[RMDB]
RNA sequence: GGGAACGACUCGAGUAGAGUCGAAAAGGGGUAGCUCAUCUUAAAGUACUUCAGUAUAUCGCGACAGUUGAUCGUGGGAAUGUAGCAGGCGCUAAUAUCCAACACAAUAUCACAGCCCAUCAACAGGCUCUUGACGGCUAUUCGUAGCCGUCAAGAGAAAAGAAACAACAACAACAAC
Reactivity to DMS in 0.01 (KOAc 150mM, MgCl2 10mM, bicine 150mM(pH8.5), 24C), signal-to-noise 1, nucleotides 027 to 126: g000g030g000g000u000a110g070c040u000c000a070u000c100u030u000a040a100a270g060u000a020c010u000u020c040a050g020u000a110u000a070u040c120g000c000g050a060c040a010g000u000u030g040a030u050c040g020u010g010g000g000a040a040u010g000u000a000g000c000a070g040g070c040g010c010u030a050a140u070a130u040c070c000a040a000c070a010c040a070a160u010a110u070c150a070c140a060g000c050c000c030a090u010c290a020a020c190a220g000g000
Reactivity to 2A3 in 0.01 (KOAc 150mM, MgCl2 10mM, bicine 150mM(pH8.5), 24C), signal-to-noise 3, nucleotides 027 to 126: g070g000g000g000u000a010g000c040u020c000a060u020c070u100u280a100a100a020g080u040a010c020u080u070c030a030g040u070a130u030a090u230c050g000c000g050a010c040a110g060u060u050g110a130u100c080g000u020g040g060g010a060a100u110g000u120a020g010c030a080g160g000c050g000c060u000a030a030u090a100u090c020c050a060a080c060a090c010a060a170u110a100u210c070a080c010a050g010c000c000c000a010u100c000a010a000c010a040g030g000